Chemical mapping of a 177-nucleotide RNA with DMS and 2A3. Conditions: 150 mM KOAc, 10 mM MgCl2 and 150 mM bicine (pH 8.5), 24 C. The 2A3 profile rests on 3,275 reads. It was measured as part of the RMDB library OK2TRN.

RNA sequence: GGGAACGACUCGAGUAGAGUCGAAAAGUUAAAUGGAGUUCUAGCUUCUGUUAGCAUGAAUGUGAUCUACUCAGAGAUUUAUGCUUCUUAUGAGGACCUCAAGAGAAAUUAGGUUUAGUAACACAUACUAAGUAUCAGGUUUCGACCUGAUACUUAGAAAAGAAACAACAACAACAAC
Reactivity to DMS in 0.01 (KOAc 150mM, MgCl2 10mM, bicine 150mM(pH8.5), 24C), signal-to-noise 7, nucleotides 027 to 126: g010u000u010a060a130a070u000g010g010a080g010u000u010c090u000a160g010c010u000u010c060u010g010u000u000a040g010c020a050u000g010a050a040u000g020u020g010a120u000c040u000a050c060u000c040a100g010a100g010a110u000u000u000a030u010g010c050u000u000c050u010u010a090u000g000a100g000g010a070c100c010u000c150a050a210g000a150g010a080a070a080u000u000a030g000g000u000u020u000a090g010u010a030a070c090a050c100a080u010a140
Reactivity to 2A3 in 0.01 (KOAc 150mM, MgCl2 10mM, bicine 150mM(pH8.5), 24C), signal-to-noise 4, nucleotides 027 to 126: g010u020u050a030a100a110u120g030g010a050g000u130u160c100u180a100g040c000u050u020c010u050g110u090u050a010g010c010a050u070g080a120a050u140g060u100g060a040u000c000u040a010c020u010c080a040g010a020g010a090u050u120u090a100u130g040c010u020u020c000u010u130a150u160g050a090g080g040a030c010c010u030c080a080a020g050a000g050a110a150a070u100u070a050g030g020u050u020u050a060g020u080a130a000c000a010c010a070u140a100